[RMDB]
Overview:
Structure probing data (2A3 and DMS) for a 207-nucleotide construct. For 2A3, 3,511 sequencing reads were counted. The DMS profile rests on 1,582 reads.
RNA sequence: GGGAACGACUCGAGUAGAGUCGAAAAGUCCUCGUUAUCAACGUCAAAGCCAAUAAUAACUGGCAAAGAAAAACAAAACCUAGCUUUCGCUGCCUAAUAAGCAGUAGCAUAGCUGAUCCUCCGUGCAUCGCCCAUGUGCUACGGUAAGGGUCUCACUUCUAUGUAAGUCCUUCGGGACUUACAUAGAAAAAGAAACAACAACAACAAC
Reactivity to 2A3 in 0.01 (KOAc 150mM, MgCl2 10mM, bicine 150mM(pH8.5), 24C), signal-to-noise 5, nucleotides 027 to 156: g060u020c010c010u020c010g040u050u110a190u260c110a100a070c040g100u080c050a050a100a070g000c010c010a060a030u190a190a040u120a210a090c110u030g010g000c020a040a070a020g050a040a070a020a000a010c070a030a100a010a030c010c110u090a020g000c000u010u060u050c030g000c000u010g000c020c000u100a120a050u260a220a020g000c000a010g010u020a030g020c030a030u030a020g000c030u030g000a000u010c010c000u010c000c000g000u000g000c000a020u070c060g140c040c020c010a050u200g010u010g010c040u130a010c000g010g020u040a060a070g010g000g000u000c000u010c010a030c030u000
Reactivity to DMS in 0.01 (KOAc 150mM, MgCl2 10mM, bicine 150mM(pH8.5), 24C), signal-to-noise 1, nucleotides 027 to 156: g010u000c040c000u000c140g010u000u000a120u000c090a100a170c080g000u000c090a080a150a180g030c020c000a040a100u000a040a140u010a110a060c150u000g000g020c020a090a060a150g000a060a060a170a160a120c030a100a080a090a130c020c110u000a090g010c040u000u000u000c020g020c010u000g010c000c000u030a140a090u020a100a080g020c020a030g000u000a070g020c040a080u000a030g000c020u010g010a040u000c020c000u010c000c010g010u000g010c000a040u000c080g000c040c080c040a120u000g030u000g040c000u000a040c000g030g020u000a030a040g030g000g020u010c030u010c090a070c140u000